[RMDB]
RNA sequence: GGGAACGACUCGAGUAGAGUCGAAAAACAUAGUACGCUAUGACCCCAGCUAGGUAAAGAGCCCUGUGGAGACACCUGGAUUCAGAGAACAUGUCUCCACUGAGCACUUGGGCCUUGAUGGCGGCAACAAUUUCAGCCCCUUCGGGGGCUGAAAUUGAAAAGAAACAACAACAACAAC
Reactivity to 2A3 in 0.01 (KOAc 150mM, MgCl2 10mM, bicine 150mM(pH8.5), 24C), signal-to-noise 1, nucleotides 027 to 126: a000c000a000u040a000g050u080a000c210g080c090u000a050u200g100a300c020c000c000c000a010g000c010u060a000g000g020u030a030a030a010g020a000g000c030c000c000u040g000u000g000g000a000g000a020c000a000c000c010u080g080g110a300u300u300c080a110g040a000g020a130a020c030a060u040g030u050c000u000c000c000a000c000u000g000a020g000c000a020c070u040u070g170g040g000c000c000u020u000g050a040u030g000g060c080g030g030c030a030a020

Structure probing data (2A3) for a 177-nucleotide construct.
The 2A3 profile rests on 360 reads.
Conditions: 150 mM KOAc, 10 mM MgCl2 and 150 mM bicine (pH 8.5), 24 C.
2A3 adducts were read by reverse transcription with SuperScript II with manganese.